Structure probing data (DMS and 2A3) for a 177-nucleotide construct. Values are in units of 0.01, from 0 to 300, in steps of 10. The reactions ran in a buffer of 150 mM KOAc, 10 mM MgCl2 and 150 mM bicine (pH 8.5), at 24 C.

RNA sequence: GGGAACGACUCGAGUAGAGUCGAAAAUACCAAUGGUUCGCCAUUGGUACUUGUAUUGACGAAUACUACCGUAGAAGUAUUCAGCUCUCAUAACUACGGAUAUACACUAGAGUUUCGACUCUAGUAAACUCUAUAACCUAUUCGUAGGUUAUAGAGUAAAAGAAACAACAACAACAAC
Reactivity to DMS in 0.01 (KOAc 150mM, MgCl2 10mM, bicine 150mM(pH8.5), 24C), signal-to-noise 9, nucleotides 027 to 126: u000a010c000c000a000a000u000g000g010u000u020c240g020c010c000a010u000u000g000g010u000a000c040u000u000g010u010a220u000u010g010a150c150g000a020a010u000a010c000u000a110c010c020g000u000a000g000a200a020g010u000a010u000u000c000a100g010c110u000c020u000c020a070u000a100a150c010u000a010c010g000g010a300u010a090u010a080c180a040c010u000a010g000a020g000u000u000u010c200g010a020c000u000c000u000a000g000u000a020a070
Reactivity to 2A3 in 0.01 (KOAc 150mM, MgCl2 10mM, bicine 150mM(pH8.5), 24C), signal-to-noise 9, nucleotides 027 to 126: u020a000c000c000a000a000u010g000g040u040u050c230g050c080c000a000u000u000g000g000u000a020c010u060u110g130u120a170u070u220g110a060c070g010a010a000u000a010c010u060a260c010c000g000u010a010g020a180a000g010u000a010u020u020c020a090g050c020u020c000u010c030a080u060a210a120c010u000a000c010g010g010a020u050a010u020a140c070a000c020u000a000g000a010g010u020u080u110c190g110a020c000u000c000u000a000g000u000a020a010